[RMDB]
RNA sequence: GGGAACGACUCGAGUAGAGUCGAAAAGCGUGAUUAGGGAUAAUUAUUAAUCUGUAAACCCGCGAACAGAACAGGGCCCAAUUAUUAAGCGGGGCCCAUGGACGAAUUUUAAGUCCUCACACGCGAAGGAUAGGUAGUAGUUCGCUACUACCUAUCCAAAAGAAACAACAACAACAAC
Reactivity to DMS in 0.01 (KOAc 150mM, MgCl2 10mM, bicine 150mM(pH8.5), 24C), signal-to-noise 2, nucleotides 027 to 126: g010c000g030u000g010a170u000u000a140g000g010g000a120u000a030a040u000u000a060u000u030a100a150u000c010u000g000u010a090a140a100c050c020c020g000c110g000a120a060c100a000g010a040a070c130a090g020g020g010c020c020c000a100a040u000u000a160u000u010a060a130g000c200g050g020g000g010c030c020c030a020u000g000g000a070c210g030a060a050u000u000u000u000a090a150g000u000c000c000u020c130a040c010a010c000g000c000g040a110a100
Reactivity to 2A3 in 0.01 (KOAc 150mM, MgCl2 10mM, bicine 150mM(pH8.5), 24C), signal-to-noise 1, nucleotides 027 to 126: g000c000g020u020g000a270u070u140a130g030g020g000a000u040a180a010u200u050a000u050u060a110a050u060c000u010g040u000a070a140a200c030c030c030g030c060g030a050a030c030a040g040a070a050c060a120g020g000g000c000c010c000a020a020u160u150a070u180u160a130a000g080c060g080g000g000g000c010c020c000a020u020g020g020a010c020g010a040a000u000u110u080u090a040a050g020u000c000c010u040c010a050c000a000c020g030c000g070a150a030
Overview
Chemical mapping of a 177-nucleotide RNA with DMS and 2A3. The RNA was probed in 150 mM KOAc, 10 mM MgCl2 and 150 mM bicine (pH 8.5) at 24 C. For DMS, 1,536 sequencing reads were counted. Values are in units of 0.01, from 0 to 300, in steps of 10.